Chemical mapping of a 207-nucleotide RNA with 2A3 and DMS. For DMS, 3,757 sequencing reads were counted. It was measured as part of the RMDB library ARCHII. Reactivities are given for positions 27 through 156.

RNA sequence: GGGAACGACUCGAGUAGAGUCGAAAACGUAAGACGGGGAUAACGCGGAGUCAAACCAAAACGAGAUCGUGUGGAAGCCACCGUUUGAGGAUCGAAGCACUAAAUUGAAUCAAACUAGCUUAAGUUUAGCGUGUCUGUCCGCAUGCUUAAGUGAAAUAGACCUAUUUAAGUUCGCUUAAAUAGGUCUAAAAGAAACAACAACAACAAC
Reactivity to 2A3 in 0.01 (KOAc 150mM, MgCl2 10mM, bicine 150mM(pH8.5), 24C), signal-to-noise 4, nucleotides 027 to 156: c060g030u060a060a000g050a030c020g000g000g020g020a020u050a120a050c080g030c090g090g010a030g060u080c050a070a060a080c040c020a080a040a010a030c090g010a030g020a140u090c050g010u030g000u050g050g040a040a020g010c010c010a030c020c010g010u010u010u030g010a010g010g000a000u070c030g020a020a000g000c030a020c070u210a090a040a080u200u230g020a000a020u060c030a030a010a020c010u010a000g000c000u010u010a000a000g000u020u050u130a040g000c010g010u110g040u070c110u120g170u090c010c000g000c010a010u020g000c000u010u010a000a000g010u000g030a010a000a000u030
Reactivity to DMS in 0.01 (KOAc 150mM, MgCl2 10mM, bicine 150mM(pH8.5), 24C), signal-to-noise 3, nucleotides 027 to 156: c090g000u020a060a110g000a030c020g000g040g050g010a150u010a130a100c060g020c040g020g050a160g040u010c040a050a160a140c070c030a030a080a070a110c080g020a160g000a090u010c080g000u000g020u010g000g010a140a140g000c050c030a100c060c030g010u030u000u000g020a070g010g020a090u000c100g020a090a130g030c030a030c020u000a020a060a090u000u000g010a060a160u000c060a060a040a110c080u010a260g000c040u000u000a030a030g000u000u000u000a160g040c010g020u010g030u020c060u010g000u000c070c040g030c010a120u000g000c010u000u000a070a050g020u010g000a040a070a120u000